[RMDB]
RNA sequence: GGGAACGACUCGAGUAGAGUCGAAAAGCAAAUAAACUCAGUUAAAAUAACUUUAUGGUUGUGACACAGUUUGACAAAAGCAAAGGAAAUUCAGAGUCACUGCUCACACUGUAUCCUCAGCUGAUUCAACUUGAAAGGAAUUCGUUCCUUUCAAGUUAAAAGAAACAACAACAACAAC
Reactivity to DMS in 0.01 (KOAc 150mM, MgCl2 10mM, bicine 150mM(pH8.5), 24C), signal-to-noise 8, nucleotides 027 to 126: g020c060a060a140a080u000a060a100a100c080u000c020a040g010u000u010a060a070a100a080u000a090a130c010u000u000u000a060u010g000g020u000u000g030u000g000a040c260a100c040a030g000u010u000u020g020a030c040a050a090a100a130g010c180a040a080a130g010g010a070a080a110u010u010c090a080g010a300g000u000c010a030c040u000g000c300u000c010a020c030a010c020u000g020u000a050u000c010c010u000c270a050g000c030u000g010a080u010u010c120
Reactivity to 2A3 in 0.01 (KOAc 150mM, MgCl2 10mM, bicine 150mM(pH8.5), 24C), signal-to-noise 5, nucleotides 027 to 126: g000c020a040a060a130u170a110a110a030c050u040c030a010g030u060u120a090a120a100a130u070a070a070c020u070u060u050a050u090g070g050u160u210g040u030g030a010c020a000c010a100g040u080u220u170g020a000c030a000a190a040a010g080c050a070a100a120g260g120a170a260a060u170u090c020a050g020a010g140u020c010a010c010u010g010c000u020c010a000c000a000c000u010g000u030a050u040c010c010u060c040a020g030c020u020g000a070u150u090c010
Conditions: 150 mM KOAc, 10 mM MgCl2 and 150 mM bicine (pH 8.5), 24 C.
The record gives the reactivity of an RNA of 177 nucleotides to DMS and 2A3.
The DMS profile rests on 8,312 reads.
Source: RMDB library OK2TRN, as collected in RNAgym.